[RMDB]
Structure probing data (2A3) for a 207-nucleotide construct. Values cover nucleotides 27 to 156. For 2A3 the reverse transcriptase was SuperScript II with manganese.
RNA sequence: GGGAACGACUCGAGUAGAGUCGAAAAGUGCCUCGUCGGCCCGGAAUGCCAACCUGAUCCGAAGUUCAAGGUGGUUUCUCUGGCCUUCCAGAGAGAUGCGCGUCGGAAGAACCGACGAACAAACCUUAAAACAAAACGACGUUCGCGUCGUUUUGAACCGUACUUCAUCGUUCGCGAUGAAGUACGGAAAAGAAACAACAACAACAAC
Reactivity to 2A3 in 0.01 (KOAc 150mM, MgCl2 10mM, bicine 150mM(pH8.5), 24C), signal-to-noise 1, nucleotides 027 to 156: g090u040g050c010c030u000c000g090u010c040g010g000c060c000c000g000g040a030a030u120g000c000c030a040a040c030c000u030g010a050u000c010c160g120a170a080g040u080u110c060a040a030g000g000u000g030g000u020u100u010c050u000c010u000g000g040c030c000u090u200c020c000a050g000a000g000a000g000a020u150g100c030g000c000g010u060c000g020g020a070a010g020a180a050c000c000g000a000c020g010a020a040c040a020a130a050c000c020u160u210a070a040a030a030c020a010a000a000a000c000g000a000c030g000u050u090c090g030c000g120u010c000g000u000u000u020u000g000a010a000